[RMDB]
RNA sequence: GGGAACGACUCGAGUAGAGUCGAAAAUGCUGCAGAAGGAGCUGCCAAGUAAGCAAUCCAUAAAUAUGUAAUAGCACCGUUCUGGGAGAAAAGGACUUUUUACUUGGUAACCAGGCGUGUAGGUUAGCCUGCAUGGUACUUUCGAGUACCAUGCAGGAAAAGAAACAACAACAACAAC
Reactivity to 2A3 in 0.01 (KOAc 150mM, MgCl2 10mM, bicine 150mM(pH8.5), 24C), signal-to-noise 3, nucleotides 027 to 126: u060g000c020u030g000c020a040g040a180a040g070g050a050g010c000u010g000c000c000a040a010g040u010a020a020g030c040a040a070u030c010c000a020u120a090a070a030u300a050u100g110u050a150a090u040a140g040c010a050c100c030g060u150u120c100u270g030g060g000a070g090a030a100a000a030g000g050a050c000u020u060u000u000u110a020c000u000u000g030g000u000a020a020c020c000a020g100g000c060g000u030g020u020a050g100g010u010u070a020g000
Reactivity to DMS in 0.01 (KOAc 150mM, MgCl2 10mM, bicine 150mM(pH8.5), 24C), signal-to-noise 3, nucleotides 027 to 126: u010g030c010u000g000c010a070g000a230a120g000g000a090g020c020u000g000c010c020a010a050g000u000a020a010g000c120a060a150u000c020c000a120u050a060a050a130u020a100u030g000u010a110a090u030a080g010c140a110c070c030g000u020u070c090u050g010g000g020a110g010a060a030a030a130g010g000a020c130u000u010u030u000u000a050c010u020u000g010g010u020a020a110c040c000a070g000g030c050g000u000g000u010a040g000g000u000u000a080g010
The data come from the RNA Mapping Database (RMDB), library OK1LIB.
This 177-nucleotide RNA was probed chemically with 2A3 and DMS.
The reactions ran in a buffer of 150 mM KOAc, 10 mM MgCl2 and 150 mM bicine (pH 8.5), at 24 C.
Reactivities are given for positions 27 through 126.